[RMDB]
RNA sequence: GGGAACGACUCGAGUAGAGUCGAAAACGCGUAUUGGUGGGCCGACACUCGGUGGUGGUUCAUCAUGGUUACCGCAGGGGCCGCGUCCUACGUGACCGGCGUUGCGGCCGCGUGGCUCGACCCUGCUGACGACUGAGAGACGAGGACACGAUGCCGAAGGCAGCAAACCAUUCGUGGUUUGCUGCCUAAAAGAAACAACAACAACAAC
Reactivity to 2A3 in 0.01 (KOAc 150mM, MgCl2 10mM, bicine 150mM(pH8.5), 24C), signal-to-noise 1, nucleotides 027 to 156: c000g030c030g070u070a060u090u170g000g020u040g010g010g020c020c070g080a010c000a000c020u250c110g080g080u080g030g010u030g000g000u070u100c020a020u030c020a000u040g210g000u060u100a010c000c000g000c000a000g010g000g060g000c070c000g020c010g010u120c000c020u150a170c020g130u300g030a000c000c000g080g000c130g080u020u090g040c010g000g000c000c000g000c000g020u030g000g010c030u010c010g000a010c000c000c000u000g010c000u020g060a020c070g040a040c020u100g020a070g000a000g000a100c000g030a020g000g000a000c010a000c120g070a120u120g070c020c000g050a000